[RMDB]
RNA sequence: GGGAACGACUCGAGUAGAGUCGAAAACAACAAAAUAUUCAAAGUCUCUGAGAAACGUCGAUCACAGUUACCUGCCGUUGCACUAUUAAUGAGCGCUGUAUUUGAUGUAUUGCCUAGAAUAACAACUAUAUAUUUCAGUGAAGGUGGUGUUAGAGAAGCGAAUGUUCACAUUCGUGUGAACAUUCGCAAAAGAAACAACAACAACAAC
Reactivity to 2A3 in 0.01 (KOAc 150mM, MgCl2 10mM, bicine 150mM(pH8.5), 24C), signal-to-noise 2, nucleotides 027 to 156: c030a000a010c020a010a040a060a060u200a120u130u300c080a080a180a020g020u010c010u010c020u110g040a040g030a130a130a000c030g040u040c040g030a030u020c030a000c000a060g020u100u020a060c010c000u090g060c030c050g060u060u120g060c080a070c050u080a030u210u100a120a090u120g000a000g050c020g030c060u010g010u030a060u040u070u110g070a060u050g000u070a100u040u120g000c000c000u020a060g060a120a000u070a080a050c070a050a050c060u000a000u040a070u020a030u180u110u230c020a000g000u010g080a030a000g050g010u010g060g000u010g030u010u090a050g010a000g010a080a000